An RNA of 177 nucleotides, treated with 2A3 and read out base by base. The 2A3 profile rests on 821 reads. The RNA was probed in 150 mM KOAc, 10 mM MgCl2 and 150 mM bicine (pH 8.5) at 24 C. Values are in units of 0.01, from 0 to 300, in steps of 10.

[RMDB]
RNA sequence: GGGAACGACUCGAGUAGAGUCGAAAAAGGAGGAGGCGCAGUGUUCUCUCCUGAGCGUGAAGCCGGCUCUUGGUGUCGCUUUGCUGCGACUGCCUUUUGCCAUUGAUGAUCGUUCUUCCUUCCCGCAAUGUACGCGAUCCUUCGGGAUCGCGUACAUAAAAGAAACAACAACAACAAC
Reactivity to 2A3 in 0.01 (KOAc 150mM, MgCl2 10mM, bicine 150mM(pH8.5), 24C), signal-to-noise 2, nucleotides 027 to 126: a000g030g000a060g000g100a000g020g000c070g000c130a040g100u030g080u300u000c000u000c000u010c000c000u000g000a010g000c070g000u020g070a050a020g040c110c000g000g000c020u000c000u000u070g000g010u000g010u030c020g020c000u170u070u230g160c270u110g000c000g010a030c040u050g020c000c000u000u030u000u000g010c000c060a170u000u120g080a100u060g030a050u110c000g000u000u000c000u030u020c030c000u010u010c000c000c000g000c060a040